[RMDB]
Conditions: 150 mM KOAc, 10 mM MgCl2 and 150 mM bicine (pH 8.5), 24 C. This 207-nucleotide RNA was probed chemically with 2A3 and DMS. The DMS profile rests on 2,683 reads. 2A3 adducts were read by reverse transcription with SuperScript II with manganese. Reactivities are given for positions 27 through 156. For DMS the reverse transcriptase was MarathonRT.

RNA sequence: GGGAACGACUCGAGUAGAGUCGAAAACGGAGGUGAUGUGCCCAUUCAUCACCGAUGGGAUACGAGCUCAGACUGAUGGGAUCGCGGUUGGCCCUGUCCUCGUGUCAGCCGCUAAAACUUAGAGGAAUCGCGUCGCUGGAUCCUGCCCGUCGGAGCCCAGUGUAGGUUUCUUCGGAAACCUACACUGAAAAGAAACAACAACAACAAC
Reactivity to 2A3 in 0.01 (KOAc 150mM, MgCl2 10mM, bicine 150mM(pH8.5), 24C), signal-to-noise 2, nucleotides 027 to 156: c030g010g000a030g020g000u010g000a000u000g000u030g010c010c000c020a030u030u040c010a000u010c000a010c020c000g010a010u030g020g010g040a050u070a170c100g030a060g050c040u040c070a040g020a140c080u090g000a020u030g000g020g020a030u030c020g000c010g050g000u040u060g050g010c000c010c060u080g060u070c020c000u050c020g020u020g020u010c000a000g030c010c010g000c010u020a000a010a020a070c090u140u180a040g000a010g020g100a010a080u130c110g000c020g100u060c020g000c070u050g010g000a050u010c000c010u050g070c000c000c030g020u050c040g000g010a020g030c000c050
Reactivity to DMS in 0.01 (KOAc 150mM, MgCl2 10mM, bicine 150mM(pH8.5), 24C), signal-to-noise 1, nucleotides 027 to 156: c040g000g010a300g010g010u010g040a000u000g040u000g000c050c070c040a200u000u000c040a030u000c000a030c000c080g000a240u000g000g000g000a180u020a050c030g020a150g020c040u020c020a240g010a100c080u000g000a040u000g020g000g010a060u000c050g000c030g030g000u000u000g030g000c040c020c000u010g030u000c070c020u000c020g000u020g000u000c020a090g000c000c030g000c030u000a020a020a010a070c170u000u000a060g000a040g000g000a040a100u000c080g000c060g020u000c020g020c020u000g000g000a050u000c060c020u020g000c010c000c040g000u000c020g000g010a110g020c030c040